[RMDB]
RNA sequence: GGGAACGACUCGAGUAGAGUCGAAAAUUGAAAAUUUAAGAGCAAAGUGUCCGGCUCGAUCCCUGCGAAUUGAAUUCUGAACGCUAGAGUAAUCAGUGUCUUUCAAGUUCUGGUAAUGUUUAGCAUAACCACUGGAGGGAAGCAAUUCAGCACAGUACUCAUUCUCCUUCUUCGGAAGGAGAAUGAGAAAAGAAACAACAACAACAAC
Reactivity to 2A3 in 0.01 (KOAc 150mM, MgCl2 10mM, bicine 150mM(pH8.5), 24C), signal-to-noise 1, nucleotides 027 to 156: u080u040g030a000a000a000a070u060u120u130a080a020g000a010g000c070a060a160a180g070u080g070u140c110c000g000g000c000u000c000g000a010u000c030c000c020u020g000c010g050a030a040u030u030g000a020a060u080u000c080u120g020a080a010c040g010c070u110a060g050a000g060u110a060a060u050c000a000g010u010g030u030c020u000u110u020c050a080a070g000u040u060c040u070g030g000u000a030a030u040g050u050u120u070a080g030c000a000u020a020a060c010c010a060c020u030g060g000a000g060g020g000a000a020g030c030a020a010u000u000c020a000g000c020a030c030a100g160u170a130